[RMDB]
RNA sequence: GGGAACGACUCGAGUAGAGUCGAAAAUCUUGAUUUUCUUCUUCUCCUUCCGGAGAUUUCUCUCGAGAUCCUCGACUAACUUUCUUGAAUUCACCCACUUCUCAAGAACCUCUUCCCUUCCGUCGCGCUUCCGCCUCGAUUCGGACCGGCUCAUCUCCGCUUGCAUAUUGUUCGCAAUAUGCAAGCGAAAAGAAACAACAACAACAAC
Reactivity to 2A3 in 0.01 (KOAc 150mM, MgCl2 10mM, bicine 150mM(pH8.5), 24C), signal-to-noise 2, nucleotides 027 to 156: u050c050u060u130g060a060u080u070u040u050c020u170u020c020u030u000c010u030c040c000u260u140c090c120g040g010a020g010a080u050u170u020c060u000c020u010c060g050a050g030a080u040c020c050u060c070g050a050c040u090a210a030c030u110u110u080c020u060u070g070a090a070u190u040c020a120c020c060c020a070c060u090u040c020u030c050a050a060g030a100a050c010c030u090c060u100u050c020c010c000u060u060c030c030g030u040c040g010c010g030c120u030u020c030c010g030c020c010u040c050g040a090u110u030c020g040g000a020c000c030g070g000c030u040c060a100u010c040u020c030